The record gives the reactivity of an RNA of 177 nucleotides to 2A3 and DMS. For DMS, 5,771 sequencing reads were counted. Conditions: 150 mM KOAc, 10 mM MgCl2 and 150 mM bicine (pH 8.5), 24 C. DMS adducts were read by reverse transcription with MarathonRT. Source: RMDB library VIROID, as collected in RNAgym. Reactivities are rounded to 0.1 and cut off at 0 and 3. The 2A3 profile rests on 3,364 reads.

[RMDB]
RNA sequence: GGGAACGACUCGAGUAGAGUCGAAAAUCCGGUCCUUUGGAGUCCAUUUCUCUCGUUGGAUAUUCUCCUCGGAGAAGGGAGAUGGGGCCAGUCCCAGUCGGUUCGCUCUCGUAGUCACAGCCGCUGGCAUACCAAACCAGUUCGCUGGUUUGGUAUGAAAAGAAACAACAACAACAAC
Reactivity to 2A3 in 0.01 (KOAc 150mM, MgCl2 10mM, bicine 150mM(pH8.5), 24C), signal-to-noise 3, nucleotides 027 to 126: u040c010c010g010g020u020c000c020u160u120u170g170g080a160g140u080c020c020a090u040u050u010c010u000c000u020c030g180u160u060g000g000a030u000a090u300u120c080u020c020c000u000c020g000g020a030g010a040a010g020g000g000a050g020a030u070g010g010g000g000c000c000a010g070u050c010c010c000a000g240u280c050g010g000u000u050c030g000c020u010c020u040c100g200u300a010g050u030c030a040c050a100g000c000c000g050c010u010g020g030
Reactivity to DMS in 0.01 (KOAc 150mM, MgCl2 10mM, bicine 150mM(pH8.5), 24C), signal-to-noise 4, nucleotides 027 to 126: u000c020c030g010g010u000c010c020u000u000u010g020g010a210g010u000c000c020a080u000u000u000c000u000c000u010c040g030u010u010g000g010a050u010a180u000u010c120u000c000c000u010c070g010g010a040g010a040a020g000g010g000a050g000a090u000g010g010g010g010c010c010a100g020u000c090c010c000a040g010u010c030g000g000u000u000c180g000c020u000c020u020c170g010u020a020g010u000c060a120c230a120g000c000c040g000c030u000g000g000